[RMDB]
RNA sequence: GGGAACGACUCGAGUAGAGUCGAAAAACCCGAGCCUUCGGGCUCGGGUGAACCUGUGUGGAUUGACCAGUAGCGCCUCCCUGAAGGUAAACUUCUGGCGCUUAAAGGGCCGCUUCGGCGGCCCUAACAAUGGUAACGUAUUCGUACGUUACCAUUGAAAAGAAACAACAACAACAAC
Reactivity to DMS in 0.01 (KOAc 150mM, MgCl2 10mM, bicine 150mM(pH8.5), 24C), signal-to-noise 1, nucleotides 027 to 126: a030c010c010c000g010a050g010c010c000u030u020c270g070g020g060c000u010c000g000g040g020u000g000a070a100c060c000u000g010u000g030u000g000g010a300u020u030g010a070c040c030a080g010u000a010g010c040g010c000c010u010c110c130c160u020g010a080a010g000g000u000a080a080a180c030u000u010c010u000g000g040c000g050c010u000u000a010a110a050g010g010g050c050c010g020c000u010u020c150g050g070c000g020g070c020c020c000u000a010a030
The data come from the RNA Mapping Database (RMDB), library M2PK50. The record gives the reactivity of an RNA of 177 nucleotides to DMS. The reactions ran in a buffer of 150 mM KOAc, 10 mM MgCl2 and 150 mM bicine (pH 8.5), at 24 C. Reactivities are rounded to 0.1 and cut off at 0 and 3.